[RMDB]
RNA sequence: GGGAACGACUCGAGUAGAGUCGAAAACGACACCAGGAUUAUGCAUACAUGUCCGUUGUCCGAAUCCGUGGUGCAGCUAUGAUGACGCGGAUAAACAUUCGCACGAACGAUAUGAGGAGUUAAUCCAAGAGUCAUACUACUUCGGUAGUAUGACUCUAAAAGAAACAACAACAACAAC
Reactivity to 2A3 in 0.01 (KOAc 150mM, MgCl2 10mM, bicine 150mM(pH8.5), 24C), signal-to-noise 2, nucleotides 027 to 126: c030g040a010c010a010c000c010a040g000g000a010u050u020a010u020g070c020a000u030a060c040a010u070g000u000c040c010g000u000u060g010u000c020c040g030a020a010u000c000c000g000u050g010g010u100g010c030a010g020c010u090a060u140g020a050u020g020a000c020g000c000g000g000a000u020a010a040a000c040a050u060u040c000g010c010a000c000g070a090a000c010g000a020u010a030u030g020a010g040g000a030g030u080u060a040a010u000c000c000a020
Reactivity to DMS in 0.01 (KOAc 150mM, MgCl2 10mM, bicine 150mM(pH8.5), 24C), signal-to-noise 3, nucleotides 027 to 126: c060g000a180c090a130c110c060a130g000g000a030u000u010a020u010g040c100a090u020a070c090a050u010g010u000c040c070g000u030u020g000u000c100c080g000a120a110u000c020c000g030u000g030g030u020g020c070a040g000c070u020a060u030g000a060u030g000a080c080g000c000g050g000a030u000a040a000a090c130a060u000u000c010g000c050a100c040g010a040a060c110g000a030u000a040u010g000a080g000g000a110g000u000u010a090a110u000c040c010a120

An RNA of 177 nucleotides, treated with 2A3 and DMS and read out base by base. For 2A3 the reverse transcriptase was SuperScript II with manganese. Reactivities are given for positions 27 through 126. It was measured as part of the RMDB library OK1LIB. Conditions: 150 mM KOAc, 10 mM MgCl2 and 150 mM bicine (pH 8.5), 24 C. For DMS the reverse transcriptase was MarathonRT.